[RMDB]
Structure probing data (2A3 and DMS) for a 177-nucleotide construct. Conditions: 150 mM KOAc, 10 mM MgCl2 and 150 mM bicine (pH 8.5), 24 C. 2A3 adducts were read by reverse transcription with SuperScript II with manganese. DMS adducts were read by reverse transcription with MarathonRT. The 2A3 profile rests on 1,681 reads. Source: RMDB library OK2TRN, as collected in RNAgym.
RNA sequence: GGGAACGACUCGAGUAGAGUCGAAAAGAUAUUUUUUGCCACAUAGCGAGCAGCAUAGGCAGCAGAACGGUCCACUUUGGAUGGAUCUUUACCAGAGAAUGCGCCGCCACCAUGACGUGCCAUGCCGCAGCAGGUUAGAAUUCGUUCUAACCUGCUGAAAAGAAACAACAACAACAAC
Reactivity to 2A3 in 0.01 (KOAc 150mM, MgCl2 10mM, bicine 150mM(pH8.5), 24C), signal-to-noise 2, nucleotides 027 to 126: g040a010u100a250u120u090u060u040u100u140g100c030c020a080c000a060u150a030g020c040g050a030g050c010a010g000c010a040u060a080g110g000c020a020g000c030a030g040a120a010c080g010g040u000c030c000a010c080u170u140u140g160g040a140u040g000g060a040u050c010u050u090u050a090c010c010a000g000a010g020a190a040u030g030c000g010c050c000g000c010c000a020c000c010a040u040g070a030c020g060u030g000c020c000a040u070g040c000c020g030
Reactivity to DMS in 0.01 (KOAc 150mM, MgCl2 10mM, bicine 150mM(pH8.5), 24C), signal-to-noise 3, nucleotides 027 to 126: g020a110u000a000u010u000u000u000u000u000g000c030c030a050c130a100u010a090g020c100g000a060g030c020a070g010c030a080u010a080g020g000c050a050g040c050a090g000a070a050c170g000g020u000c040c030a040c060u010u010u000g000g010a120u000g020g000a020u010c040u000u010u000a100c080c040a040g000a120g010a090a070u000g020c080g000c040c010g010c020c030a080c050c070a020u000g020a070c070g000u000g000c010c040a040u010g000c030c060g020